[RMDB]
Structure probing data (2A3 and DMS) for a 207-nucleotide construct. For 2A3 the reverse transcriptase was SuperScript II with manganese. The 2A3 profile rests on 7,602 reads.

RNA sequence: GGGAACGACUCGAGUAGAGUCGAAAACGGAAGCAUUAAAACCAUUCGAGCUAGUCAAUGCGUGGCGUGUCUCUCCGCAGCGUGUUGGCGAAUGUAAAGAGUGACUAAGCAUGUAGUACCGAUGAUGAUAAGAGCAAUUCGUUCGCGAAUUGCUCAACUGUAUCUACAACUUCGGUUGUAGAUACAGAAAAGAAACAACAACAACAAC
Reactivity to 2A3 in 0.01 (KOAc 150mM, MgCl2 10mM, bicine 150mM(pH8.5), 24C), signal-to-noise 6, nucleotides 027 to 156: c040g040g030a090a020g030c030a030u070u110a050a080a020a050c040c010a040u050u040c050g020a030g030c030u050a020g030u010c010a000a000u010g000c000g010u030g100g000c020g010u090g070u050c030u020c010u000c120c000g000c010a010g000c000g010u020g000u010u000g010g010c010g010a020a010u070g020u060a030a120a010g020a000g010u010g000a020c040u050a030a030g060c030a060u040g030u090a050g030u050a090c030c070g030a070u070g000a020u050g010a030u100a210a150g000a000g000c000a000a000u000u000c000g030u030u070c170g010c010g120a000a000u000u000g000c000u000c000a000a000
Reactivity to DMS in 0.01 (KOAc 150mM, MgCl2 10mM, bicine 150mM(pH8.5), 24C), signal-to-noise 3, nucleotides 027 to 156: c070g010g000a240a100g010c020a090u000u020a070a100a110a110c050c020a070u000u000c020g010a200g020c020u000a130g020u020c020a040a040u000g000c010g030u000g020g030c040g000u010g000u000c140u000c050u000c120c060g060c010a090g030c000g000u010g030u000u000g000g000c010g000a110a040u010g030u000a020a050a180g030a070g010u000g000a060c040u000a060a160g020c090a070u010g000u000a070g020u000a110c000c020g000a100u000g010a130u000g000a130u000a080a160g010a010g000c010a020a010u010u000c010g050u000u000c300g000c030g000a010a000u000u000g010c000u000c010a010a020